[RMDB]
RNA sequence: GGGAACGACUCGAGUAGAGUCGAAAAGAUAUGGAGUUGCGGAUGUGCGAAGAACUCGGAAACGAGGGAGCACUCCGAACUACAACUCCUAAGUCAAAACUUGACCAUACUUCGGUAUGGUCAAGAACCUUUAGUACGUGUUCGCACGUACUAAAGGAAAAGAAACAACAACAACAAC
Reactivity to DMS in 0.01 (KOAc 150mM, MgCl2 10mM, bicine 150mM(pH8.5), 24C), signal-to-noise 4, nucleotides 027 to 126: g000a030u000a300u010g010g010a000g020u000u000g020c000g000g010a040u020g010u000g000c010g000a090a150g030a120a210c000u000c000g000g010a100a110a180c010g010a010g000g010g000a120g010c000a010c010u010c000c010g000a030a010c070u020a280c010a010a000c010u000c000c000u000a020a110g000u020c060a080a070a100a140c000u000u000g000a010c000c000a020u000a000c000u000u000c200g010g010u000a010u000g000g000u000c000a000a010g010a040a140
Reactivity to 2A3 in 0.01 (KOAc 150mM, MgCl2 10mM, bicine 150mM(pH8.5), 24C), signal-to-noise 3, nucleotides 027 to 126: g020a020u070a030u140g010g000a010g000u010u020g020c000g020g010a240u300g090u000g030c020g110a300a050g010a090a050c000u020c010g000g000a070a070a020c010g000a010g000g020g020a010g040c000a010c010u000c010c000g000a030a000c030u120a030c000a000a000c010u000c000c010u050a290a020g100u040c030a020a010a140a220c000u000u000g000a000c000c000a010u010a000c020u040u080c220g060g000u000a000u000g050g000u000c000a010a000g000a000a000